RNA sequence: GGGAACGACUCGAGUAGAGUCGAAAAAUGCAGGCUGCUCUGGCUGCGGCUCCCCUGGUGACGCUCUACAAGCAGUACGUGGUCCGGUUCGGCCUCGGGUACCGCGAAGAAGUCCAUCCUGACUUGCCACGUCAUCACCCUUCGGGGUGAUGACGUGAAAAGAAACAACAACAACAAC
Reactivity to 2A3 in 0.01 (KOAc 150mM, MgCl2 10mM, bicine 150mM(pH8.5), 24C), signal-to-noise 2, nucleotides 027 to 126: a040u110g040c030a000g030g040c020u030g020c020u080c070u080g110g040c020u030g020c050g000g000c040u000c000c000c000c000u040g000g120u090g070a050c050g050c030u020c050u060a070c090a120a050g000c020a000g030u060a060c030g020u010g040g070u040c000c000g020g050u090u150c030g000g060c010c010u060c000g000g000g030u060a070c010c000g030c000g020a050a030g050a050a000g000u100c000c000a060u000c000c000u120g030a120c000u020u050g060c000